[RMDB]
RNA sequence: GGGAACGACUCGAGUAGAGUCGAAAAAGUAUCGAGCGAAAAGCUUGAUACAAAUGCCAGCUAUGAGGCAAAGUGUCAUAGAAAUAAGGAUACGAAUAAAUAAAGUAUCCAAGACUCGAAAGAGUCAGCAUUGUUGAAGGUUCGCCUUCAACAAUGCAAAAGAAACAACAACAACAAC
Reactivity to 2A3 in 0.01 (KOAc 150mM, MgCl2 10mM, bicine 150mM(pH8.5), 24C), signal-to-noise 2, nucleotides 027 to 126: a000g000u000a000u000c000g010a000g000c030g090a140a160a000a000g010c000u000u000g000a000u000a020c000a000a050a010u120g000c000c000a000g000c010u010a000u000g000a000g000g000c020a080a060a000g100u100g000u010c000a000u000a000g040a000a050a010u010a010a050g010g000a000u000a000c000g030a060a070u100a110a120a020u150a020a040a010g000u000a010u000c000c000a000a020g010a000c000u010c000g000a040a000a010g000a010g000u000c000a010
Reactivity to DMS in 0.01 (KOAc 150mM, MgCl2 10mM, bicine 150mM(pH8.5), 24C), signal-to-noise 1, nucleotides 027 to 126: a210g000u000a000u000c000g040a000g000c000g000a090a050a120a170g000c000u000u000g000a000u000a000c000a000a070a220u000g000c120c000a160g000c000u060a000u000g000a000g000g030c000a090a030a010g000u010g030u000c000a000u070a000g030a000a080a050u000a000a240g040g020a030u000a000c070g000a080a200u010a150a090a050u030a040a060a120g000u000a000u000c010c000a110a110g000a000c000u000c000g000a080a250a040g010a030g000u000c000a200